[RMDB]
The record gives the reactivity of an RNA of 177 nucleotides to 2A3 and DMS. The data come from the RNA Mapping Database (RMDB), library OK1LIB. For 2A3, 1,535 sequencing reads were counted.

RNA sequence: GGGAACGACUCGAGUAGAGUCGAAAAGCAUGGCCUGAAAGCUGGGGAAUUCCCGCUCGCCGUGCAUCAGCGCCACCGUGCCGCGCUGCUCGGCGGUCAGCUCGGCGUGCCGUUGCAAUGCCGACGGUCCGUUGUGACAGUUCGCUGUCACAACGGAAAAAGAAACAACAACAACAAC
Reactivity to 2A3 in 0.01 (KOAc 150mM, MgCl2 10mM, bicine 150mM(pH8.5), 24C), signal-to-noise 3, nucleotides 027 to 126: g100c060a060u210g070g000c000c020u140g120a170a050a000g030c070u120g010g030g020g100a080a140u150u220c030c000c030g000c010u050c030g030c020c000g000u010g000c020a110u080c040a060g080c000g020c020c010a130c120c090g020u120g030c050c060g050c000g000c020u000g000c000u040c010g050g000c000g000g100u030c000a000g000c000u020c020g010g000c010g010u030g000c000c020g100u090u110g020c060a170a260u140g070c020c010g060a020c010g000g030
Reactivity to DMS in 0.01 (KOAc 150mM, MgCl2 10mM, bicine 150mM(pH8.5), 24C), signal-to-noise 2, nucleotides 027 to 126: g000c100a100u020g000g010c000c060u050g030a080a070a090g030c080u020g090g000g010g020a150a290u020u020c010c000c010g010c060u000c050g010c000c000g030u000g000c080a080u020c100a120g000c000g010c030c020a090c140c090g000u000g030c000c100g050c020g000c100u000g010c050u000c030g010g000c080g010g000u020c080a050g000c050u000c020g020g000c010g000u000g030c000c170g010u000u030g000c040a120a150u040g010c000c020g000a030c000g000g000
Background:
The RNA was probed in 150 mM KOAc, 10 mM MgCl2 and 150 mM bicine (pH 8.5) at 24 C. For DMS the reverse transcriptase was MarathonRT.